This 207-nucleotide RNA was probed chemically with 2A3.
The reactions ran in a buffer of 150 mM KOAc, 10 mM MgCl2 and 150 mM bicine (pH 8.5), at 24 C.
For 2A3, 646 sequencing reads were counted.
RNA sequence: GGGAACGACUCGAGUAGAGUCGAAAAGCCUCCGCGCUUCCAUAGAAAGGGGACGGGGCAGAUCGCAAGUGCUACAACCGAGCGGUGGUAUCUGUCAAACUAAGCAGCCACUGCACAUCAAUUGACUAAACGAUGCCGAUCUUCGGAUCGGCAUCAAGUACGCGUAUAUGUUCGCAUAUACGCGUACAAAAGAAACAACAACAACAAC
Reactivity to 2A3 in 0.01 (KOAc 150mM, MgCl2 10mM, bicine 150mM(pH8.5), 24C), signal-to-noise 1, nucleotides 027 to 156: g000c020c010u080c030c060g060c020g020c120u240u020c040c020a080u100a110g220a060a030a020g040g020g000g000a000c020g010g020g000g000c000a000g000a050u030c030g000c050a080a010g000u000g050c030u120a090c030a030a070c060c060g090a020g080c000g010g000u030g000g020u040a020u030c000u000g050u050c060a000a040a100c090u160a110a000g000c000a000g000c050c000a000c000u020g050c010a000c010a070u270c090a090a170u060u110g080a090c050u220a050a120a030c090g040a000u050g000c000c000g000a000u020c000u000u090c110g050g000a010u000c000g000g040c000a000u000c000a000a000